[RMDB]
RNA sequence: GGGAACGACUCGAGUAGAGUCGAAAAACGCGGAGUACGCUCCGCGACAACACUUCUUUCGACCCGCUAACCGAGACCUAUGGGUCGUUAAAUUACCUCUCUAUCUUACUCACAUAACAUCGCACAAAAAACGUGGUUCGGUUCGCCGAACCACGAAGAUACCAGAGAACUUCGGUUCUCUGGUAUCAAAAGAAACAACAACAACAAC
Reactivity to 2A3 in 0.01 (KOAc 150mM, MgCl2 10mM, bicine 150mM(pH8.5), 24C), signal-to-noise 5, nucleotides 027 to 156: a000c010g000c000g000g000a010g000u030a020c130g010c070u010c020c000g040c000g030a000c010a070a010c020a020c030u110u150c030u040u130u070c010g010a000c010c010c010g030c120u090a070a060c050c060g110a040g070a120c020c040u090a110u190g010g000g000u000c010g000u000u050a020a040a050u080u100a060c010c020u030c020u000c030u090a050u120c040u090u070a050c020u060c060a060c020a150u140a140a030c020a100u160c090g040c120a060c090a060a100a030a060a080a040c030g010u000g010g000u010u000c000g000g050u030u060c180g040c040c010g000a000a000c000c000a000c000g000a000a000
Reactivity to DMS in 0.01 (KOAc 150mM, MgCl2 10mM, bicine 150mM(pH8.5), 24C), signal-to-noise 1, nucleotides 027 to 156: a090c010g010c010g020g000a030g090u000a120c300g030c050u020c070c000g090c020g030a090c070a070a070c140a100c050u000u000c070u000u000u000c010g020a020c000c010c010g020c160u000a120a130c080c070g010a080g000a040c070c020u000a060u000g020g050g000u010c030g050u010u000a060a080a170u010u000a060c050c040u000c000u000c020u030a090u000c050u000u000a070c020u000c020a110c060a090u000a040a080c030a080u010c020g010c000a050c100a000a020a110a040a050a060c060g060u010g000g000u010u000c020g030g050u000u010c260g030c000c020g020a000a020c030c000a000c000g000a000a050